[RMDB]
Description: Structure probing data (DMS) for a 177-nucleotide construct. For DMS, 1,065 sequencing reads were counted. Conditions: 150 mM KOAc, 10 mM MgCl2 and 150 mM bicine (pH 8.5), 24 C.
RNA sequence: GGGAACGACUCGAGUAGAGUCGAAAAGACACUCAGUUCGCUGAGUGUCAAAUAAAAUCACCGGUUAAAAACGAGGCGUUAUAACCGCUGAACGCCUCGUUAAAAGAACCAAGUUCGCUUGGUUCAAGAAUUAGAGACUCUUCGGAGUCUCUAAUUCAAAAGAAACAACAACAACAAC
Reactivity to DMS in 0.01 (KOAc 150mM, MgCl2 10mM, bicine 150mM(pH8.5), 24C), signal-to-noise 1, nucleotides 027 to 126: g000a030c000a020c010u010c000a000g010u010u000c230g010c000u000g010a010g020u000g000u020c010a010a060a060u010a060a060a070a080u010c070a160c000c010g010g000u000u040a020a060a080a040a000c000g010a010g000g010c010g020u000u000a040u010a100a090c090c130g000c030u020g010a020a030c000g020c000c000u000c000g010u000u000a030a050a110a100g000a020a000c010c010a010a020g020u010u040c210g020c010u000u000g010g010u000u000c010a120a050